The record gives the reactivity of an RNA of 207 nucleotides to 2A3 and DMS. The RNA was probed in 150 mM KOAc, 10 mM MgCl2 and 150 mM bicine (pH 8.5) at 24 C. In probing experiments dimethyl sulfate is read out at A N1 and C N3, which are open when not base-paired. For 2A3, 5,453 sequencing reads were counted. Reactivities are given for positions 27 through 156. For 2A3 the reverse transcriptase was SuperScript II with manganese. 2A3 is a SHAPE reagent: it acylates the 2'-hydroxyl of flexible nucleotides of all four kinds. For DMS, 9,120 sequencing reads were counted.
RNA sequence: GGGAACGACUCGAGUAGAGUCGAAAAUGACCCUUCGGGGUCAGAAUCGCGUACUACGUGACAUGACUAUGGGUGGGAGUGCUUUCCCAAAUAGGAAAGCACGACGAUCACCCUAAGGUCAACAGCACGUAUCGCCAAACAGAGGAUUCGUCCUCAAUAUUAAUCUAUGGUUCGCCAUAGAUUAAUAAAAAGAAACAACAACAACAAC
Reactivity to 2A3 in 0.01 (KOAc 150mM, MgCl2 10mM, bicine 150mM(pH8.5), 24C), signal-to-noise 5, nucleotides 027 to 156: u050g000a000c000c010c000u000u030c300g070g000g010g000u000c010a020g030a050a110u160c080g000c010g040u080a120c070u000a000c030g010u000g100a130c030a140u070g000a010c000u030a070u140g020g000g000u000g000g010g000a030g000u010g000c000u010u000u000c050c020c010a130a230a130u290a070g000g000a000a000a000g000c000a000c000g030a060c000g000a010u010c000a000c010c000c000u010a010a010g020g000u000c000a030a010c060a050g060c000a010c000g000u020a040u300c010g010c010c020a040a130a040c080a040g010a010g010g010a020u050u140c190g090u050c050c000u000c000a010a000
Reactivity to DMS in 0.01 (KOAc 150mM, MgCl2 10mM, bicine 150mM(pH8.5), 24C), signal-to-noise 4, nucleotides 027 to 156: u000g000a020c000c000c000u000u000c280g070g020g020g010u010c000a010g010a070a100u010c080g020c010g010u000a080c160u000a020c010g020u010g000a070c080a300u000g000a020c030u010a300u000g000g020g000u000g000g000g020a210g010u010g020c010u000u000u010c000c000c030a010a180a170u000a080g020g010a010a030a010g020c000a000c000g010a070c150g000a090u000c000a020c000c010c000u000a000a080g010g010u000c020a020a090c040a120g010c020a010c010g000u000a030u000c010g010c000c080a070a110a110c160a120g000a030g000g000a060u000u000c120g010u000c000c000u000c010a020a060